Structure probing data (2A3 and DMS) for a 170-nucleotide construct. For 2A3 the reverse transcriptase was SuperScript II with manganese. In probing experiments dimethyl sulfate is read out at A N1 and C N3, which are open when not base-paired. It was measured as part of the RMDB library 15KLIB. The DMS profile rests on 99,473 reads. Reactivities are given for positions 27 through 129. The reactions ran in a buffer of 150 mM KOAc, 10 mM MgCl2 and 150 mM bicine (pH 8.5), at 24 C.
[RMDB]
RNA sequence: GGGAACGACUCGAGUAGAGUCGAAAACGAGUGGAUGUUCCGCCUCCCCGGGGAGCCGAGUGAGGCUUAUCCCGGAGUGCCGGGCAAGUCCCCCCAUGCCCGUUCCACGGCUCCCUUCCAGAAGGGCUAACGCUUAUGUUCGCAUAAGCGAAAAGAAACAACAACAACAAC
Reactivity to 2A3 in 0.01 (KOAc 150mM, MgCl2 10mM, bicine 150mM(pH8.5), 24C), signal-to-noise 9, nucleotides 027 to 129: c060g020a040g030u050g030g040a080u080g060u210u070c030c020g020c010c000u050c010c000c010c010g000g000g000g010a010g000c000c020g050a110g150u280g090a080g040g000c000u010u040a140u120c000c000c000g000g000a040g010u070g080c030c010g000g000g000c030a040a020g210u210c010c000c000c010c000c000a020u050g010c000c000c000g020u070u010c030c010a030c000g000g000c010u030c000c000c000u020u020c070c030a080g030a140a050g040g000g000c020u040a110a020
Reactivity to DMS in 0.01 (KOAc 150mM, MgCl2 10mM, bicine 150mM(pH8.5), 24C), signal-to-noise 9, nucleotides 027 to 129: c080g010a090g000u010g000g000a070u030g030u000u000c010c010g000c050c000u010c030c010c010c050g000g000g000g000a020g010c010c010g020a140g040u040g020a150g020g010c020u000u000a060u060c020c010c000g000g020a130g030u030g040c070c020g000g030g000c210a080a060g030u030c010c000c000c010c000c010a120u000g020c010c030c030g020u000u030c030c020a100c020g030g000c030u020c020c000c000u020u040c080c070a130g000a130a070g000g000g000c110u000a070a160